[RMDB]
RNA sequence: GGGAACGACUCGAGUAGAGUCGAAAAGAUAUGGACGGGAUAGGGAGACGCUUCGGAAACGAACGUCGAGGAUCUAUACCGUCCUAAGUCAAACUACCGAUAUGAAGUUCGCUUCAUAUCGGUAGAACGGUAUAUUGGUCUUCGGACCAAUAUACCGAAAAGAAACAACAACAACAAC
Reactivity to DMS in 0.01 (KOAc 150mM, MgCl2 10mM, bicine 150mM(pH8.5), 24C), signal-to-noise 2, nucleotides 027 to 126: g000a030u020a300u000g000g010a010c010g010g010g000a020u000a000g000g020g010a010g010a020c000g010c300u000u000c000g000g000a120a130a160c010g010a010a000c000g010u000c000g000a060g000g010a070u010c000u000a000u000a020c000c000g030u000c000c000u000a020a080g000u000c020a140a110a200c010u000a000c000c010g030a000u000a000u000g010a030a010g000u000u020c210g000c010u010u010c000a000u020a000u000c010g000g020u000a000g000a000a030
Reactivity to 2A3 in 0.01 (KOAc 150mM, MgCl2 10mM, bicine 150mM(pH8.5), 24C), signal-to-noise 2, nucleotides 027 to 126: g000a020u060a030u140g000g000a010c010g000g000g000a010u010a000g000g060g010a030g020a000c020g080c260u020u000c020g040g010a080a080a050c010g000a010a010c000g000u000c000g010a090g000g000a000u030c000u010a010u010a020c010c010g010u010c010c000u000a000a000g010u000c010a040a030a080c010u010a000c000c010g000a000u000a010u010g000a010a010g040u090u170c250g140c150u020u000c000a000u000a000u000c000g000g010u000a000g000a010a000